[RMDB]
The record gives the reactivity of an RNA of 177 nucleotides to DMS and 2A3.
It was measured as part of the RMDB library OK1LIB.
RNA sequence: GGGAACGACUCGAGUAGAGUCGAAAACGGCAACCGCGCUGACCGAAUCCGAUUGCGUGUUGCUGGACACCGCCGCGGAGCACACCGAUGCGGUGGUAGCUGUGGUGUCCAAGAUCGACGUGCACCGAAUACCCCGAGGUUUCGACCUCGGGGUAUUAAAAGAAACAACAACAACAAC
Reactivity to DMS in 0.01 (KOAc 150mM, MgCl2 10mM, bicine 150mM(pH8.5), 24C), signal-to-noise 2, nucleotides 027 to 126: c060g020g010c030a060a130c020c000g000c000g070c300u000g000a040c000c040g000a210a100u020c010c010g020a000u000u000g000c020g050u040g000u000u000g040c070u010g020g000a040c030a000c000c000g010c000c050g000c000g030g030a110g080c110a170c030a010c020c030g000a230u030g020c080g030g040u030g040g000u000a060g000c050u000g000u020g000g000u000g010u010c000c000a070a040g000a020u070c050g010a000c040g000u030g000c000a080c300c070g050
Reactivity to 2A3 in 0.01 (KOAc 150mM, MgCl2 10mM, bicine 150mM(pH8.5), 24C), signal-to-noise 3, nucleotides 027 to 126: c020g000g000c000a060a000c000c020g010c010g000c120u050g050a150c010c020g040a040a050u070c040c050g120a090u060u170g030c000g020u040g010u000u040g000c000u000g000g000a000c000a000c000c000g000c040c020g000c000g030g150a210g000c060a070c010a000c090c050g190a300u300g210c100g020g000u000g010g000u020a070g010c030u030g020u060g080g000u010g000u020c000c000a010a030g080a100u110c050g020a010c010g010u010g030c010a020c030c050g040